The record gives the reactivity of an RNA of 177 nucleotides to 2A3 and DMS. DMS adducts were read by reverse transcription with MarathonRT. The reactions ran in a buffer of 150 mM KOAc, 10 mM MgCl2 and 150 mM bicine (pH 8.5), at 24 C. For 2A3 the reverse transcriptase was SuperScript II with manganese.

[RMDB]
RNA sequence: GGGAACGACUCGAGUAGAGUCGAAAAGAUAUGGAGAAGGGAUGCUACGCGUUUGACGUCGGAAACGACCGAGCGUAGAACUACAUCACCUUCUCCUAAGUCAAACAGACUGGUUCGCCAGUCUGAACACUCACUUGCAGUUCGCUGCAAGUGAGUGAAAAGAAACAACAACAACAAC
Reactivity to 2A3 in 0.01 (KOAc 150mM, MgCl2 10mM, bicine 150mM(pH8.5), 24C), signal-to-noise 2, nucleotides 027 to 126: g060a010u060a020u120g020g000a010g000a020a010g020g000g000a020u010g010c030u030a070c040g050c010g080u060u230u300g100a080c090g000u030c020g030g020a050a050a070c010g020a000c030c030g030a000g000c000g010u050a030g000a010a000c060u100a020c000a000u010c020a300c030c000u000u040c000u040c000c000u020a000a000g020u010c000a000a050a070c000a000g010a000c020u010g010g040u030u020c160g060c130c020a010g010u000c010u000g000a040a020
Reactivity to DMS in 0.01 (KOAc 150mM, MgCl2 10mM, bicine 150mM(pH8.5), 24C), signal-to-noise 3, nucleotides 027 to 126: g000a010u000a300u010g000g000a020g000a030a000g010g020g000a020u010g030c000u000a000c000g000c000g010u000u010u020g010a100c300g030u000c000g000g000a130a090a180c000g010a010c010c000g000a030g020c010g000u000a020g010a060a020c050u010a300c010a020u000c000a080c020c000u000u000c000u000c000c000u000a000a060g000u000c040a070a120a260c010a000g000a000c000u000g000g000u000u040c230g000c020c000a020g010u000c000u000g000a100a110